[RMDB]
RNA sequence: GGGAACGACUCGAGUAGAGUCGAAAAGGAAGGUGGAGAAGCUUUGCAGGCAGAGUCUGGAAUACUGCUUUUGGAAAUGUGAGGCCAGGCCCCGUGCCUUCCAAAUGCACCCGAUCUUUCCGCCGCCGUAGGUCCCGGAUAUAUGGAUUUGCUUGGGUACAACCACUUUAUUCGUAAAGUGGUUGUAAAAAGAAACAACAACAACAAC
Reactivity to 2A3 in 0.01 (KOAc 150mM, MgCl2 10mM, bicine 150mM(pH8.5), 24C), signal-to-noise 2, nucleotides 027 to 156: g010g020a030a030g000g030u080g020g020a160g000a230a070g030c000u040u030u090g030c100a030g010g000c020a020g000a030g060u000c030u040g000g050a110a080u080a180c020u080g080c000u000u100u190u200g160g060a130a150a040u170g000u080g080a040g010g070c010c000a010g000g000c020c010c000c040g170u060g010c000c000u030u090c020c000a000a000a020u080g020c040a070c000c010c020g020a080u020c000u000u040u020c010c020g010c000c050g010c040c070g030u030a030g000g040u020c000c000c060g000g000a040u050a000u030a000u140g080g000a090u010u040u050g020c020u000u040g000g000g030
Reactivity to DMS in 0.01 (KOAc 150mM, MgCl2 10mM, bicine 150mM(pH8.5), 24C), signal-to-noise 1, nucleotides 027 to 156: g030g000a070a030g040g030u010g030g020a140g000a100a130g040c040u000u000u000g030c070a070g010g000c000a080g000a080g010u000c030u000g010g010a150a110u010a110c070u000g000c000u000u020u010u000g010g000a050a090a080u000g020u010g030a090g020g000c010c040a090g030g020c020c030c020c030g040u000g030c030c090u000u010c050c000a000a080a020u000g000c000a160c020c000c040g010a110u000c030u000u000u000c010c000g010c020c010g040c030c090g000u000a070g040g020u000c010c010c030g050g000a120u000a060u000a090u000g010g010a150u010u000u000g030c010u010u000g020g010g000